[RMDB]
RNA sequence: GGGAACGACUCGAGUAGAGUCGAAAAUUAGAAGCAAGUAUGAGAUGUAGAACUCCUCAACCUAGUUUAACUAUGCUAUAUGAUGAAAAGCUUCCAGAAGAUUUCUUAAUGAAAGCUGCUGAAUGUAAUGACGCAUCCUAUUCGUAGGAUGCGUCAUAAAAGAAACAACAACAACAAC
Reactivity to 2A3 in 0.01 (KOAc 150mM, MgCl2 10mM, bicine 150mM(pH8.5), 24C), signal-to-noise 2, nucleotides 027 to 126: u200u120a010g090a150a020g070c040a110a000g070u020a230u080g090a000g000a030u090g200u060a070g070a300a010c000u060c010c000u070c120a040a270c000c030u040a050g000u070u100u140a130a140c100u020a020u080g050c000u000a000u000a020u150g290a030u070g010a110a040a040a040g040c000u020u000c000c000a000g000a040a000g000a090u000u020u000c020u000u210a120a130u160g050a060a040a010g000c000u050g000c050u040g010a050a040u050g080u180a030
Reactivity to DMS in 0.01 (KOAc 150mM, MgCl2 10mM, bicine 150mM(pH8.5), 24C), signal-to-noise 2, nucleotides 027 to 126: u040u060a040g000a010a010g020c010a110a060g000u000a110u020g000a070g000a100u060g030u000a090g010a090a120c110u000c030c040u010c080a080a090c130c050u010a030g010u010u020u070a110a080c110u050a070u000g020c060u000a080u010a090u020g020a050u020g030a090a050a050a130g000c010u000u000c050c060a040g000a060a050g000a050u000u030u000c000u010u020a050a060u050g030a030a050a010g010c000u000g020c020u000g020a090a070u060g010u010a060